[RMDB]
Source information:
An RNA of 177 nucleotides, treated with 2A3 and DMS and read out base by base. The DMS profile rests on 1,133 reads. Reactivities are given for positions 27 through 126. The RNA was probed in 150 mM KOAc, 10 mM MgCl2 and 150 mM bicine (pH 8.5) at 24 C.
RNA sequence: GGGAACGACUCGAGUAGAGUCGAAAACCAUAACAGUUCGCUGUUAUGGACUGUCGGUAUGCGGAAUAAUUAAUCGUCCGCUUACGAUUAAUACCGACUAUAAAGCGUAACACUUCGGUGUUACGAACCGUAUGCCUACGUUCGCGUAGGCAUACGGAAAAGAAACAACAACAACAAC
Reactivity to 2A3 in 0.01 (KOAc 150mM, MgCl2 10mM, bicine 150mM(pH8.5), 24C), signal-to-noise 2, nucleotides 027 to 126: c000c000a000u010a010a000c000a000g040u040u060c080g080c120u000g010u000u020a010u000g010g030a070c050u060g000u000c020g000g000u010a050u120g000c010g000g100a050a040u170a110a130u220u200a070a110u130c120g030u020c010c010g000c030u000u030a030c020g000a010u100u040a010a000u020a000c010c000g020a010c030u000a020u060a120a090a000g050c000g000u010a040a000c010a010c020u010u070c250g050g010u000g050u010u000a000c010g000a010a020
Reactivity to DMS in 0.01 (KOAc 150mM, MgCl2 10mM, bicine 150mM(pH8.5), 24C), signal-to-noise 1, nucleotides 027 to 126: c020c000a010u000a020a010c000a020g010u000u040c210g000c010u000g020u010u000a010u000g000g000a120c150u000g030u000c000g010g030u000a040u000g070c010g000g000a070a050u010a070a070u000u040a040a060u000c100g000u000c080c070g010c000u000u000a040c130g000a200u000u010a110a070u000a050c000c000g020a010c000u020a080u010a070a060a090g030c000g000u010a000a010c000a000c000u000u020c150g020g010u000g000u000u000a000c000g000a010a050